The record gives the reactivity of an RNA of 207 nucleotides to 2A3 and DMS. The 2A3 profile rests on 1,114 reads. The data come from the RNA Mapping Database (RMDB), library OK3TST.
RNA sequence: GGGAACGACUCGAGUAGAGUCGAAAACGGUGUAUAUUUGUGCAGUGUUGAGUCCAGGUGGUCACACCUGUUGUCUGUACACUAGACUGUAGGUAAGGAUGGAAUUCCCAGGAUCUGCCCAGUACAGGCUUCGGCUGUGACCUGCGCUGAGGCCCUAAGUCAUUUAAUCGUUCGCGAUUAAAUGACUAAAAGAAACAACAACAACAAC
Reactivity to 2A3 in 0.01 (KOAc 150mM, MgCl2 10mM, bicine 150mM(pH8.5), 24C), signal-to-noise 2, nucleotides 027 to 156: c060g080g000u070g040u020a130u030a080u200u120u050g070u050g000c050a140g050u020g040u140u100g030a000g020u020c010c010a040g000g070u030g020g040u030c000a000c010a000c000c000u010g010u000u030g000u000c000u000g010u010a000c040a040c040u050a120g100a170c090u060g050u130a050g010g010u040a050a060g010g030a020u050g060g040a140a120u190u140c020c000c000a030g030g050a060u030c010u020g000c000c000c000a020g000u010a010c010a010g010g020c000u000u000c000g000g000c060u020g010u000g000a020c000c000u000g010c070g000c010u010g040a050g020g000c010c000c020u060a070
Reactivity to DMS in 0.01 (KOAc 150mM, MgCl2 10mM, bicine 150mM(pH8.5), 24C), signal-to-noise 1, nucleotides 027 to 156: c060g020g010u000g000u000a060u000a060u020u020u010g020u000g000c030a050g020u000g010u000u000g020a120g010u000c040c020a100g000g020u000g040g000u000c110a080c000a020c020c020u010g020u000u000g030u000c000u000g000u010a080c040a070c070u000a090g050a110c050u000g010u000a090g050g020u010a090a120g040g010a090u000g000g010a140a190u020u020c030c000c030a140g040g000a120u000c040u000g000c000c040c020a140g000u000a030c020a070g030g000c020u000u000c020g000g020c070u000g060u000g000a030c020c000u000g020c080g000c010u000g000a140g050g010c000c020c040u000a090